Structure probing data (2A3 and DMS) for a 170-nucleotide construct. Conditions: 150 mM KOAc, 10 mM MgCl2 and 150 mM bicine (pH 8.5), 24 C. The 2A3 profile rests on 57,595 reads. Source: RMDB library 15KLIB, as collected in RNAgym. Reactivities are given for positions 27 through 129. 2A3 adducts were read by reverse transcription with SuperScript II with manganese.
RNA sequence: GGGAACGACUCGAGUAGAGUCGAAAAUUGAAGGUAAAACAGCCUGUGGGUGAAACACACCCUCAGGGCCCAUUGGGCGCUAGCACUCUGGUAUCACGGUACCUUUGUGCGCCUGUUUUACCGAAGGGAACUCAAGGGUUCGCCCUUGAGAAAAGAAACAACAACAACAAC
Reactivity to 2A3 in 0.01 (KOAc 150mM, MgCl2 10mM, bicine 150mM(pH8.5), 24C), signal-to-noise 9, nucleotides 027 to 129: u130u110g060a080a010g010g000u000a000a000a000a000c000a000g000c000c000u010g000u030g000g000g000u000g050a080a100a010c120a010c010a010c050c000c000u000c000a000g000g000g010c000c000c000a020u280u300g000g000g000c020g010c090u130a050g000c010a000c010u000c000u000g000g010u000a000u010c020a040c240g120g000u000a010c000c000u010u010u000g000u000g000c000g000c000c000u000g000u000u000u000u000a000c000c000g000a000a000g010g010g010a020a020
Reactivity to DMS in 0.01 (KOAc 150mM, MgCl2 10mM, bicine 150mM(pH8.5), 24C), signal-to-noise 8, nucleotides 027 to 129: u020u030g010a200a100g000g010u020a000a000a000a000c010a000g010c000c000u000g020u000g000g000g000u000g010a110a170a090c280a200c000a010c010c010c000u000c010a000g000g000g020c000c000c000a040u040u080g010g000g020c020g020c030u060a060g050c010a020c010u000c000u010g000g020u010a020u000c020a140c290g020g040u010a010c000c000u000u000u000g000u000g000c020g020c000c000u000g000u020u010u000u010a010c000c020g010a050a020g020g000g010a100a120